Chemical mapping of a 177-nucleotide RNA with DMS.
RNA sequence: GGGAACGACUCGAGUAGAGUCGAAAAGAUAUGGACUUUCGAGAGACUAAGUAGCAUGGAUAGUUGCGCUCGGAAACGAGCGAACUACAACAUCCAUGCUACUUAGUGGAAUGAAAGUCCUAAGUCACUUCAAUCUAUCGUUCGCGAUAGAUUGAAGAAAAGAAACAACAACAACAAC
Reactivity to DMS in 0.01 (KOAc 150mM, MgCl2 10mM, bicine 150mM(pH8.5), 24C), signal-to-noise 2, nucleotides 027 to 126: g000a020u010a300u000g000g010a000c000u010u010u010c010g000a110g000a300g000a020c000u000a000a020g000u010a010g000c010a000u000g000g020a010u010a070g020u000u000g000c000g010c000u000c000g000g040a030a130a160c000g020a020g010c000g010a010a050c100u030a300c000a010a000c010a050u000c010c000a000u010g000c000u010a000c000u000u010a000g000u010g010g000a250a170u000g000a010a020a040g010u010c000c000u000a030a080g000u000c030a190
Values cover nucleotides 27 to 126. The reactions ran in a buffer of 150 mM KOAc, 10 mM MgCl2 and 150 mM bicine (pH 8.5), at 24 C.